[RMDB]
RNA sequence: GGGAACGACUCGAGUAGAGUCGAAAAAGUGUUAGCAUUGUUACAUUACUUUUCAAGAUGUCAAACACUGGAAAAGUAAGGAAUUAAACUUUUAUCCAGACUUUUGAGAAAACACUAUGAAAAAACAGUAUAUCCACCAUUUCGAUGGUGGAUAUACAAAAGAAACAACAACAACAAC
Reactivity to DMS in 0.01 (KOAc 150mM, MgCl2 10mM, bicine 150mM(pH8.5), 24C), signal-to-noise 1, nucleotides 027 to 126: a060g010u000g000u000u000a060g040c080a100u000u000g010u000u000a090c110a160u020u000a070c080u000u000u000u000c010a060a050g020a080u000g010u000c200a110a130a150c190a030c000u000g000g000a020a000a010a020g000u000a000a010g000g000a050a130u020u010a140a100a100c050u000u000u000u000a080u030c000c020a130g000a080c100u000u020u000u010g000a070g000a090a030a030a020c040a000c040u000a060u010g000a010a010a090a080a080a090c140a060
Reactivity to 2A3 in 0.01 (KOAc 150mM, MgCl2 10mM, bicine 150mM(pH8.5), 24C), signal-to-noise 1, nucleotides 027 to 126: a030g010u020g010u010u030a080g040c020a010u070u000g030u060u080a000c010a050u070u070a060c020u150u160u000u000c020a070a020g020a170u050g000u050c000a120a000a110c060a050c040u000g000g020a050a000a000a000g020u020a010a010g040g000a020a040u010u130a230a100a000c000u010u050u060u090a090u070c000c000a020g090a200c100u220u020u070u070g070a090g090a040a110a010a000c010a010c030u090a140u300g000a040a040a010a000a000a000c000a000

This 177-nucleotide RNA was probed chemically with DMS and 2A3. Source: RMDB library OK2TST, as collected in RNAgym. 2A3 adducts were read by reverse transcription with SuperScript II with manganese. The reactions ran in a buffer of 150 mM KOAc, 10 mM MgCl2 and 150 mM bicine (pH 8.5), at 24 C. DMS (dimethyl sulfate) methylates the pairing face of unpaired adenines and cytosines.